[RMDB]
RNA sequence: GGGAACGACUCGAGUAGAGUCGAAAAUUAUAUCAACGAAAGAUCCCGAUUUAUCACAUUUGAACUACCUACGAAUGGAUGGGACAACUAAUAUCAAAGGGAGACAGUCGUUAGUUGACCGGUUUAACGAGAGGAAGUAUUUCGAUACUUCCUCUCGAAAAGAAACAACAACAACAAC
Reactivity to 2A3 in 0.01 (KOAc 150mM, MgCl2 10mM, bicine 150mM(pH8.5), 24C), signal-to-noise 2, nucleotides 027 to 126: u050u020a020u010a020u150c030a020a040c020g070a020a040a070g050a070u030c020c030c020g000a030u050u100u050a120u060c080a070c020a190u010u000u060g050a040a020c040u020a090c110c020u080a060c070g080a010a070u070g010g040a030u070g060g000g000a030c000a060a010c030u060a010a100u040a040u190c090a180a020a010g040g020g000a030g010a000c010a010g040u020c020g020u050u030a030g000u010u020g050a020c040c000g040g040u130u180u090a040a040
Reactivity to DMS in 0.01 (KOAc 150mM, MgCl2 10mM, bicine 150mM(pH8.5), 24C), signal-to-noise 4, nucleotides 027 to 126: u000u030a100u010a130u010c080a050a050c090g020a070a080a100g010a210u000c010c010c000g000a200u000u000u010a030u000c070a090c100a060u000u000u000g000a090a170c070u000a080c090c020u010a200c130g010a050a050u000g020g000a050u000g010g020g000a120c050a030a050c100u000a030a070u010a080u000c110a050a110a170g020g000g010a050g010a120c280a070g020u000c040g010u000u000a060g010u000u000g000a160c030c040g010g010u000u010u000a080a170